[RMDB]
Background: Source: RMDB library M2RFPK, as collected in RNAgym. Chemical mapping of a 207-nucleotide RNA with 2A3 and DMS.
RNA sequence: GGGAACGACUCGAGUAGAGUCGAAAAGUGUGCUAUACUAGUAAGGUUGAAUGAAUCACCCCUUGGUGCUUAGCUUCUUUCACCAAGCAUAUUACACGCGGAUAACCGCCAAAGGAGAAAAGAUGAACUGCCCGACGAUUCUUCGGAAUCGUCGGAACACAAUAAGAGGGUUCGCCCUCUUAUUGUGAAAAGAAACAACAACAACAAC
Reactivity to 2A3 in 0.01 (KOAc 150mM, MgCl2 10mM, bicine 150mM(pH8.5), 24C), signal-to-noise 5, nucleotides 027 to 156: g040u040g010u020g020c030u050a040u050a230c050u050a040g140u120a110a140g050g030u060u090g080a110a100u090g040a070a060u140c040a070c000c010c000c010u000u030g010g000u010g020c060u060u050a040g040c000u060u050c000u000u060u030c000a010c010c000a000a010g020c010a030u050a050u150u180a050c060a010c080g010c010g000g030a110u080a290a210c010c010g020c030c030a070a050a030g070g010a050g030a060a110a030a020g040a050u130g040a080a070c050u100g040c020c000c000g000a000c000g000a000u000u000c000u020u090c190g040g000a000a000u000c000g000u010c000g000g000a000a000
Reactivity to DMS in 0.01 (KOAc 150mM, MgCl2 10mM, bicine 150mM(pH8.5), 24C), signal-to-noise 3, nucleotides 027 to 156: g000u000g040u000g020c020u010a100u000a090c060u010a130g020u000a120a070g020g010u000u000g020a110a120u000g010a130a110u000c040a110c010c010c050c010u010u000g000g010u000g000c070u010u000a080g020c050u010u010c060u010u000u000c040a060c020c030a030a080g020c030a050u000a050u000u000a070c030a090c050g030c010g010g000a210u010a090a110c030c020g000c010c030a030a070a100g010g000a150g000a070a090a080a090g000a110u010g000a060a080c090u010g010c080c000c000g010a020c000g010a020u000u000c000u000u020c300g040g020a020a000u000c000g030u010c000g010g000a020a060
For 2A3, 6,437 sequencing reads were counted.